RNA sequence: GGGAACGACUCGAGUAGAGUCGAAAAGCUGGUCGGUGACGACCAGCAACGAUCAGAGUGCUGAUCGAAACGUGCACUUAAAGACGACCAAGGCACGAACAAGCGACGCAGGUCGUCAAAGCCAGAGAGGGCAUAACAAAAAUAAAAAGGCGUCGCAGACGACAUGAUCGUUCGCGAUCAUGUCGUCAAAAGAAACAACAACAACAAC
Reactivity to 2A3 in 0.01 (KOAc 150mM, MgCl2 10mM, bicine 150mM(pH8.5), 24C), signal-to-noise 1, nucleotides 027 to 156: g000c000u000g010g050u000c010g000g060u100g070a130c020g000a000c010c000a000g010c000a000a000c010g000a000u000c000a010g090a030g220u170g120c010u000g000a010u010c000g040a010a010a000c040g010u070g000c000a060c210u050u040a140a080a010g000a000c000g000a000c000c000a000a010g050g010c010a000c010g020a070a040c080a130a020g000c000g000a000c000g030c040a010g000g010u000c000g000u000c000a040a000a000g000c000c000a030g140a020g010a160g280g000g060c010a010u170a030a000c030a060a100a050a030a000u280a040a180a000a010a020g040g000c000g000u000c000g000c000a000
The data come from the RNA Mapping Database (RMDB), library OK3TST. An RNA of 207 nucleotides, treated with 2A3 and read out base by base. For 2A3 the reverse transcriptase was SuperScript II with manganese. Conditions: 150 mM KOAc, 10 mM MgCl2 and 150 mM bicine (pH 8.5), 24 C.